[RMDB]
RNA sequence: GGGAACGACUCGAGUAGAGUCGAAAAGUUGGCCCUUGUUCGCAAGGGCCAACGCGGCGACCUUUGUGUAUUGUCAGAGCGCUCGCCCAUUGGGCGAGGUUGCUCUUGGAUUUAUACACUCUGGUAAUGGGUAGGGACGUGUUCGCACGUCCCUAAAGGUGUAAUCAUUAUUCGUAAUGAUUACACCAAAAGAAACAACAACAACAAC
Reactivity to 2A3 in 0.01 (KOAc 150mM, MgCl2 10mM, bicine 150mM(pH8.5), 24C), signal-to-noise 3, nucleotides 027 to 156: g000u000u000g000g000c000c020c010u000u030g110u060u090c260g010c160a000a000g000g000g000c000c000a010a000c010g000c000g060g060c060g060a010c000c000u010u010u020g010u010g000u000a010u010u030g010u020c000a000g000a010g000c020g000c020u000c010g010c000c000c090a300u280u300g020g000g000c000g020a010g000g090u220u180g010c010u000c000u000u050g020g000a000u090u300u040a010u000a000c000a020c010u000c000u000g050g010u040a160a180u220g090g040g050u040a010g010g000g010a000c000g000u000g010u030u040c130g020c120a010c010g010u040c000c000c000u000a010a020a000
Reactivity to DMS in 0.01 (KOAc 150mM, MgCl2 10mM, bicine 150mM(pH8.5), 24C), signal-to-noise 1, nucleotides 027 to 156: g010u000u010g020g030c020c000c010u000u000g050u000u010c300g010c030a020a010g040g020g060c030c010a010a000c010g000c100g020g010c030g000a040c000c010u000u000u000g020u040g010u010a010u000u000g030u000c020a080g000a060g050c000g020c000u000c020g030c010c000c000a190u000u010g040g050g030c000g010a040g050g020u000u010g030c000u000c020u010u000g020g020a060u000u000u000a010u000a050c040a020c000u000c040u010g000g020u000a080a140u010g010g020g020u010a030g010g020g030a030c010g070u010g000u000u000c300g040c000a040c000g030u000c000c010c000u000a000a050a030